[RMDB]
Conditions: 150 mM KOAc, 10 mM MgCl2 and 150 mM bicine (pH 8.5), 24 C.
An RNA of 177 nucleotides, treated with DMS and read out base by base.
The data come from the RNA Mapping Database (RMDB), library TTRDES.
RNA sequence: GGGAACGACUCGAGUAGAGUCGAAAAGAUAUGGAUAUACCGUAGCUCGAUAAGCUGGGAUCGGAAACGAUCCGCAGCUUUUGACGAGCGAGGGUAUAUCCUAAGUCAAAGCCGGCUUCGGCCGGCACAUUUCGCACAGGUUCGCCUGUGCGAAAUGAAAAGAAACAACAACAACAAC
Reactivity to DMS in 0.01 (KOAc 150mM, MgCl2 10mM, bicine 150mM(pH8.5), 24C), signal-to-noise 2, nucleotides 027 to 126: g010a070u000a300u000g010g000a010u000a000u010a000c000c000g040u000a300g000c010u000c000g020a180u010a000a030g080c000u010g020g010g000a000u000c000g010g010a120a140a190c010g010a010u000c010c010g000c020a010g010c010u000u000u010u010g000a210c130g000a000g020c010g000a260g010g000g020u010a000u010a000u000c000c000u010a020a130g000u010c030a140a120a180g020c000c020g050g050c010u000u060c190g000g000c000c000g000g050c010a050